[RMDB]
RNA sequence: GGGAACGACUCGAGUAGAGUCGAAAAUCAUGUUUAUUCGUAAACAUGAAACGCCGCACGGCGCGCCUGGCCACCAGGCAACGUGGAUAUGGAAGCCUGAGAAUGAGGUGCCGUUCGCGGCACCUAAGCAUUACGAAGAGUUCGCUCUUCGUAAUGCAAAAGAAACAACAACAACAAC
Reactivity to 2A3 in 0.01 (KOAc 150mM, MgCl2 10mM, bicine 150mM(pH8.5), 24C), signal-to-noise 2, nucleotides 027 to 126: u010c000a000u000g030u000u010u020a080u040u080c230g070u030a010a010a000c000a000u010g000a060a040a010c090g000c040c020g160c040a030c040g040g020c100g020c070g030c070c000u030g070g020c090c020a090c040c030a020g030g000c010a000a010c010g040u060g140g100a090u050a040u230g090g000a130a020g010c010c030u120g040a080g110a190a160u240g020a010g000g000u030g000c010c000g000u060u070c240g000c000g040g000c010a030c000c000u000a000a030
Reactivity to DMS in 0.01 (KOAc 150mM, MgCl2 10mM, bicine 150mM(pH8.5), 24C), signal-to-noise 2, nucleotides 027 to 126: u000c020a000u000g000u010u010u000a020u000u010c190g000u010a010a000a010c000a000u000g000a010a110a150c090g020c020c040g000c070a100c130g010g000c090g000c170g040c030c020u000g000g010c110c110a180c120c020a020g000g000c030a030a030c100g010u010g020g010a100u020a050u000g010g000a100a200g000c040c040u000g000a090g000a080a120u000g010a020g000g030u000g020c000c000g020u000u010c150g000c030g000g000c020a000c000c000u000a060a060